[RMDB]
RNA sequence: GGGAACGACUCGAGUAGAGUCGAAAAAACCGUAAAUUCGUUUACGGUUAACCGCAACCGAGCCGAAAGGCAUUUUAUGCCUACGGUGGCGAAAGCCUAAAAUACCAUAGGCCUUCGGGCCUAUGAAUCGUAUACAUACCUUCGGGUAUGUAUACGAAAAAGAAACAACAACAACAAC
Reactivity to 2A3 in 0.01 (KOAc 150mM, MgCl2 10mM, bicine 150mM(pH8.5), 24C), signal-to-noise 3, nucleotides 027 to 126: a010a000c030c000g000u040a060a010a030u090u100c170g050u070u010u000a000c010g000g000u000u000a030a010c010c010g030c050a020a050c050c020g060a030g030c000c000g100a220a100a000g010g000c000a000u010u020u020u090a060u070g000c010c000u020a030c010g040g000u040g010g010c000g040a050a000a000g000c010c020u080a090a080a020a050u120a070c060c000a000u000a000g000g010c000c020u020u060c180g090g020g020c000c000u010a000u000g000a010a030
Reactivity to DMS in 0.01 (KOAc 150mM, MgCl2 10mM, bicine 150mM(pH8.5), 24C), signal-to-noise 3, nucleotides 027 to 126: a020a010c000c000g010u010a000a000a030u000u020c170g010u000u000u000a000c000g000g010u000u000a040a120c030c010g000c090a050a050c080c050g020a190g000c010c010g010a070a070a060g000g000c000a020u000u010u000u000a050u010g010c010c000u020a200c030g010g000u000g010g010c000g000a100a090a100g000c010c010u010a040a080a060a060u000a140c210c000a000u000a010g000g000c000c000u000u020c140g050g010g030c000c010u000a000u000g000a050a060